[RMDB]
RNA sequence: GGGAACGACUCGAGUAGAGUCGAAAAAAUGAUAGCCGAAGCAAGUAGCUAGCGUUGCAUUGGUCUUGCGUGGUUUUCAGCGCAAGGCGGUCUUAAUUUAUAGGCUCUGUCUAGCCUUAGCUGAAACAUAACGUAAAACUUUCGAGUUUUACGUUAUAAAAGAAACAACAACAACAAC
Reactivity to 2A3 in 0.01 (KOAc 150mM, MgCl2 10mM, bicine 150mM(pH8.5), 24C), signal-to-noise 8, nucleotides 027 to 126: a000a020u160g020a050u080a060g030c020c010g030a020a000g000c010a010a010g020u050a020g050c010u000a010g000c010g080u050u060g010c060a090u060u170g100g000u010c000u000u000g000c010g020u040g010g050u090u080u110u240c060a020g010c000g000c020a000a000g000g000c010g000g000u010c020u060u150a240a230u220u220u150a230u100a090g040g000c010u010c020u040g140u010c020u020a010g000c000c000u010u020a030g000c000u010g010a020a010a010c060
Reactivity to DMS in 0.01 (KOAc 150mM, MgCl2 10mM, bicine 150mM(pH8.5), 24C), signal-to-noise 9, nucleotides 027 to 126: a050a020u010g010a070u010a130g010c020c020g010a190a060g010c030a040a050g000u010a070g010c010u000a020g010c070g010u000u010g010c050a130u010u010g020g010u000c010u000u000g000c020g030u010g020g000u010u010u010u010c130a210g010c000g010c030a000a010g000g010c010g010g000u000c060u010u000a070a120u010u000u010a120u010a060g000g000c000u000c080u000g010u010c030u000a030g010c000c010u000u000a080g020c010u000g000a100a060a060c140

An RNA of 177 nucleotides, treated with 2A3 and DMS and read out base by base. DMS adducts were read by reverse transcription with MarathonRT. For 2A3 the reverse transcriptase was SuperScript II with manganese. For 2A3, 18,282 sequencing reads were counted. Reactivities are given for positions 27 through 126. It was measured as part of the RMDB library OK2TST.